[RMDB]
RNA sequence: GGGAACGACUCGAGUAGAGUCGAAAACAGGAGGUUAGCAUAGCUCCAUUCUACUAUGCAGCUAGUCGUCGUUUUCGACGUCUAGGAUAGACCGCUACAGCAGGGUCCAUGAACUGCUGAUUACCGCGUCUCGUAGCGCGGGUUCUGGCUACGUACACGGGUAUUACGUAUUCGUACGUAAUACCCGAAAAGAAACAACAACAACAAC
Reactivity to 2A3 in 0.01 (KOAc 150mM, MgCl2 10mM, bicine 150mM(pH8.5), 24C), signal-to-noise 3, nucleotides 027 to 156: c030a010g030g010a010g000g010u140u160a020g020c000a010u020a030g000c020u000c060c000a060u130u130c010u090a090c000u000a000u010g020c010a010g080c010u000a000g010u050c000g000u010c000g040u030u080u110u300c030g010a000c010g010u010c000u000a000g000g010a010u090a060g020a010c010c000g000c020u080a030c010a010g000c000a010g010g010g040u050c170c040a130u220g060a130a030c000u000g000c000u000g010a060u000u160a080c000c010g010c010g020u050c030u010c110g070u090a000g000c020g020c020g010g010g000u030u120c060u040g050g000c020u040a010c040g060u020a030c060a030
Reactivity to DMS in 0.01 (KOAc 150mM, MgCl2 10mM, bicine 150mM(pH8.5), 24C), signal-to-noise 2, nucleotides 027 to 156: c040a180g020g030a050g010g000u010u000a160g010c030a000u000a010g010c010u000c130c300a200u000u010c010u000a020c000u000a010u000g020c030a300g000c030u000a020g000u010c010g030u000c010g040u010u000u020u010c020g030a020c000g050u000c010u010a020g010g030a180u000a180g000a040c000c000g020c020u000a100c040a030g010c020a030g000g010g000u010c010c140a090u000g000a030a080c010u000g010c010u000g010a280u000u000a070c000c000g020c000g030u000c050u020c250g000u000a130g040c010g040c010g020g010g020u010u000c020u010g020g030c020u010a060c070g000u000a110c100a250